[RMDB]
RNA sequence: GGGAACGACUCGAGUAGAGUCGAAAAUAUUACAUCUUCGGAUGUAAUAACUGGUGGUGGCUGGCUUGUUGCUAGUGGCGCAACUGUUGCCAUCACUGCGCAAUCGCUCUGAAUUCGUUCAGAGCAACUUUUCGGGAAUAUUCGUAUUCCCGAAAAGAAAAGAAACAACAACAACAAC
Reactivity to 2A3 in 0.01 (KOAc 150mM, MgCl2 10mM, bicine 150mM(pH8.5), 24C), signal-to-noise 4, nucleotides 027 to 126: u020a000u010u010a000c000a000u000c000u020u060c210g130g000a000u010g000u000a000a000u020a020a030c090u110g010g000u010g010g010u010g010g000c070u040g070g010c060u110u200g020u010u010g020c010u040a110g210u090g300g030c090g000c000a020a000c000u030g090u120u010g000c000c000a000u010c000a000c010u020g030c100g030c040a070a170u150c120g010c010u000c010u010g010a020a020u080u050c170g040u080u010c020a030g010a060g000c010a000a010
Reactivity to DMS in 0.01 (KOAc 150mM, MgCl2 10mM, bicine 150mM(pH8.5), 24C), signal-to-noise 3, nucleotides 027 to 126: u010a010u000u000a000c000a000u000c010u000u010c240g030g000a010u000g000u010a000a000u000a020a120c110u000g010g020u000g010g020u000g010g000c010u020g000g010c060u000u000g010u000u010g020c010u000a150g030u010g020g020c190g020c000a010a000c020u010g010u000u000g000c000c000a020u000c000a010c010u000g000c240g010c240a130a080u020c120g010c000u000c000u000g010a020a030u000u020c200g020u000u000c000a000g000a000g030c000a010a020

Record summary
Chemical mapping of a 177-nucleotide RNA with 2A3 and DMS. The data come from the RNA Mapping Database (RMDB), library M2PK50. For DMS, 3,652 sequencing reads were counted.